[RMDB]
RNA sequence: GGGAACGACUCGAGUAGAGUCGAAAACACUCCCACGACGCACCACAAUGCCAAUGCCGAAGGACGAAGGGAGGUUUCCCCAUGGACCGCUCAACAAUGCUCCGCGCCGGACUGUAAGAUUACCUCCCCGCAGCACCUCUGCCACUUAGGCCUAUCUACUGUUCAUUUGGUUCGCCAAAUGAACAGUAAAAGAAACAACAACAACAAC
Reactivity to 2A3 in 0.01 (KOAc 150mM, MgCl2 10mM, bicine 150mM(pH8.5), 24C), signal-to-noise 1, nucleotides 027 to 156: c040a080c000u000c000c010c000a010c080g050a000c000g040c090a040c060c040a060c100a060a080u100g010c000c020a080a080u190g060c000c010g040a140a020g060g000a060c010g030a000a080g000g060g000a000g000g040u000u000u000c000c000c000c080a100u030g020g040a100c010c080g030c040u080c010a000a240c010a130a150u210g050c040u150c140c090g000c040g010c040c000g070g000a060c020u080g100u080a100a010g040a290u030u060a020c000c000u010c030c010c000c000g000c010a010g000c000a070c020c020u090c000u020g030c060c000a060c040u060u030a010g040g000c000c000u100a120u000c040u030